RNA sequence: GGGAACGACUCGAGUAGAGUCGAAAAGUCUAGCGAAAGGAUCCCACCCGGGAAACACGCAAGUCGCGAAUUACGCCGACCGGCCAAGGUCAAUAGCAGAACUCAACUGCAUGAGUAAGCUAGACGAGCUAAUUUAUCGGUUCGCCGAUAAAUUAGCAAAAGAAACAACAACAACAAC
Reactivity to DMS in 0.01 (KOAc 150mM, MgCl2 10mM, bicine 150mM(pH8.5), 24C), signal-to-noise 2, nucleotides 027 to 126: g020u000c000u030a000g000c000g030a080a110a240g000g000a100u020c000c000c110a150c300c060c060g000g000g000a130a120a070c050a130c000g000c040a060a100g000u000c110g000c090g000a170a110u000u000a080c110g000c010c050g070a110c010c080g040g000c060c060a210a130g000g000u000c050a120a040u040a060g000c000a110g000a020a070c040u010c130a120a140c020u000g020c020a140u000g000a130g000u000a090a220g000c020u000a000g010a020c020g000a070
Reactivity to 2A3 in 0.01 (KOAc 150mM, MgCl2 10mM, bicine 150mM(pH8.5), 24C), signal-to-noise 1, nucleotides 027 to 126: g000u010c000u000a000g000c030g060a160a000a050g160g020a010u000c030c000c000a020c030c060c010g000g080g050a130a080a000c100a000c070g000c040a040a080g180u070c020g020c000g000a080a160u170u100a170c030g010c060c030g020a050c000c020g040g010c030c020a030a050g010g020u010c010a020a110u080a100g000c010a000g040a160a060c090u090c230a040a110c020u020g040c030a020u060g040a040g150u040a030a000g030c000u000a000g000a000c020g010a000